[RMDB]
RNA sequence: GGGAACGACUCGAGUAGAGUCGAAAAACGUCCACAGGAGGGAGGAGGGCGGCCGCCAUGUUUCUCUGUGUGUGUCUGUGUGUCUCAAACCCGGACAUGUCAAUCAAACCGCGGCCGCCGUCAUUCAUCCGAGUCCCGGCACUGUGCCAGCAACACAGAAAUAUUAGUGCUUCGGCACUAAUAUUUCAAAAGAAACAACAACAACAAC
Reactivity to 2A3 in 0.01 (KOAc 150mM, MgCl2 10mM, bicine 150mM(pH8.5), 24C), signal-to-noise 1, nucleotides 027 to 156: a020c020g000u030c040c030a060c040a050g000g110a020g000g030g000a040g010g010a030g040g040g010c040g000g000c040c000g000c000c020a150u120g000u060u060u040c180u030c050u020g070u000g010u000g010u010g030u090c010u010g130u000g040u010g080u080c020u050c140a150a200a070c040c000c000g000g000a000c000a000u090g130u150c030a020a110u050c030a050a060a000c020c010g000c000g000g000c000c000g000c000c000g000u040c000a000u020u000c010a010u010c000c000g010a060g010u040c010c020c000g010g010c060a060c070u070g010u060g030c050c010a030g030c040a040a080c060a010c040a020
Structure probing data (2A3) for a 207-nucleotide construct.
Source: RMDB library OK3TST, as collected in RNAgym.
Conditions: 150 mM KOAc, 10 mM MgCl2 and 150 mM bicine (pH 8.5), 24 C.